[RMDB]
Record summary: The record gives the reactivity of an RNA of 177 nucleotides to 2A3 and DMS. It was measured as part of the RMDB library OK2TST. For 2A3 the reverse transcriptase was SuperScript II with manganese. Conditions: 150 mM KOAc, 10 mM MgCl2 and 150 mM bicine (pH 8.5), 24 C. The DMS profile rests on 1,745 reads. The 2A3 profile rests on 1,062 reads.
RNA sequence: GGGAACGACUCGAGUAGAGUCGAAAAGGUGCGCCGCUGCACGCGCAGCGAUCCCGCGAAGCGUUUUAGCAGCGUGAGGGAGCUAGAAACCCAGCUCUACGGGGUAUUACGCGAAUAUUUGGCCGUGAUCUUAUGCUUGCUUCGGCAAGCAUAAGAUAAAAGAAACAACAACAACAAC
Reactivity to 2A3 in 0.01 (KOAc 150mM, MgCl2 10mM, bicine 150mM(pH8.5), 24C), signal-to-noise 1, nucleotides 027 to 126: g040g020u070g090c020g010c020c010g020c020u030g000c010a050c110g110c040g000c060a000g040c000g040a160u090c130c050c000g030c050g040a040a000g000c000g030u000u000u060u280a060g000c020a010g000c000g000u030g010a010g000g060g000a010g000c030u060a040g060a080a100a000c030c000c020a040g010c030u060c000u060a060c080g000g000g000g000u040a050u050u090a050c040g010c040g080a170a020u100a160u170u050u100g070g000c060c040g030u080g040
Reactivity to DMS in 0.01 (KOAc 150mM, MgCl2 10mM, bicine 150mM(pH8.5), 24C), signal-to-noise 2, nucleotides 027 to 126: g000g010u000g000c040g000c080c020g040c020u000g030c110a080c220g030c060g000c090a240g000c020g010a100u000c090c130c010g010c050g010a090a300g000c040g000u000u000u000u000a070g050c040a050g020c000g010u000g000a110g010g000g000a060g000c040u000a050g000a050a120a150c010c010c010a040g000c020u000c040u010a110c100g030g010g010g010u000a080u000u000a110c060g000c060g000a110a080u000a100u010u010u000g010g000c050c010g010u010g000